The record gives the reactivity of an RNA of 177 nucleotides to 2A3 and DMS. The reactions ran in a buffer of 150 mM KOAc, 10 mM MgCl2 and 150 mM bicine (pH 8.5), at 24 C. For DMS, 2,006 sequencing reads were counted. For 2A3, 1,183 sequencing reads were counted. DMS adducts were read by reverse transcription with MarathonRT.

RNA sequence: GGGAACGACUCGAGUAGAGUCGAAAACGGCGAUGUUGCCCCGCACGUUGUAGUUGGAUACGAAUAGGCCUACGGGCCCUGAACCUCAGCAGGUCGGCGACGGCUCCCGGGAAGAGACUCUCGGGCGCACGUAAGCUCCAUUCGUGGAGCUUACGUGAAAAGAAACAACAACAACAAC
Reactivity to 2A3 in 0.01 (KOAc 150mM, MgCl2 10mM, bicine 150mM(pH8.5), 24C), signal-to-noise 2, nucleotides 027 to 126: c010g030g030c040g050a050u070g060u150u080g020c070c000c010c000g000c040a130c090g040u020u040g070u040a140g010u010u070g090g000a030u010a140c070g000a080a120u060a120g000g050c010c010u010a020c120g040g000g000c030c000c000u060g040a070a060c010c140u050c020a020g000c010a000g030g090u110c030g000g000c050g040a000c020g010g000c000u000c000c000c000g000g000g050a110a040g170a000g010a090c050u000c000u000c000g030g000g000c070g000
Reactivity to DMS in 0.01 (KOAc 150mM, MgCl2 10mM, bicine 150mM(pH8.5), 24C), signal-to-noise 2, nucleotides 027 to 126: c040g020g030c090g000a080u020g020u020u010g000c000c000c020c070g010c170a090c180g130u000u000g010u000a000g010u020u030g000g050a100u090a140c060g030a140a130u070a070g050g040c010c000u000a150c130g020g000g010c000c000c020u020g000a120a100c090c010u030c040a090g000c000a140g000g000u000c140g010g010c140g000a020c170g020g050c060u000c000c000c030g000g000g000a010a070g000a230g010a190c130u020c010u000c010g020g000g020c250g020